[RMDB]
RNA sequence: GGGAACGACUCGAGUAGAGUCGAAAACACCUUCGAGGGGGUUCACACCCCCAACCUGCGGGCCGGCUACUCUUCUUUUCCUUUCCUCGUCGUCCUUGGUCAACCUCUUAAGUUCCUCUUCCUCCUCCCUGCUGAGGCUCUUCCCUCCUCCGGAGAGCAUGUUAUCUGUGUUCGCACAGAUAACAUGAAAAGAAACAACAACAACAAC
Reactivity to 2A3 in 0.01 (KOAc 150mM, MgCl2 10mM, bicine 150mM(pH8.5), 24C), signal-to-noise 3, nucleotides 027 to 156: c020a040c010c010u100u110c110g080a190g030g020g000g010g010u170u190c080a040c000a020c070c010c020c000c000a010a030c010c020u070g040c020g020g040g030c030c040g040g000c020u060a050c020u040c000u090u090c020u100u100u060u110c020c000u110u080u090c000c020u070c020g070u020c020g020u030c020c000u050u070g060g000u080c020a080a070c040c000u050c030u100u090a100a060g000u060u020c000c000u010c040u040u040c000c010u020c000c000u010c000c000c000u020g010c040u020g010a020g020g010c010u020c000u040u030c000c000c020u000c010c000u020c000c010g020g040a080g000a000g040
Reactivity to DMS in 0.01 (KOAc 150mM, MgCl2 10mM, bicine 150mM(pH8.5), 24C), signal-to-noise 1, nucleotides 027 to 156: c040a120c000c010u000u000c050g030a300g040g010g020g040g030u000u000c300a160c160a300c020c020c010c000c010a000a000c050c030u020g020c150g030g020g040c050c060g020g030c040u010a070c030u000c040u010u000c040u000u000u000u000c040c050u040u000u010c030c020u010c080g030u000c020g040u000c020c040u000u000g060g000u000c020a090a100c040c020u000c040u000u000a120a150g020u000u000c010c030u000c050u000u000c020c010u000c050c030u000c010c020c010u020g050c050u030g040a140g020g060c000u000c040u010u000c000c000c000u020c020c030u000c040c060g000g060a090g030a060g030

Annotation
Structure probing data (2A3 and DMS) for a 207-nucleotide construct. The 2A3 profile rests on 2,101 reads. Source: RMDB library VIROID, as collected in RNAgym.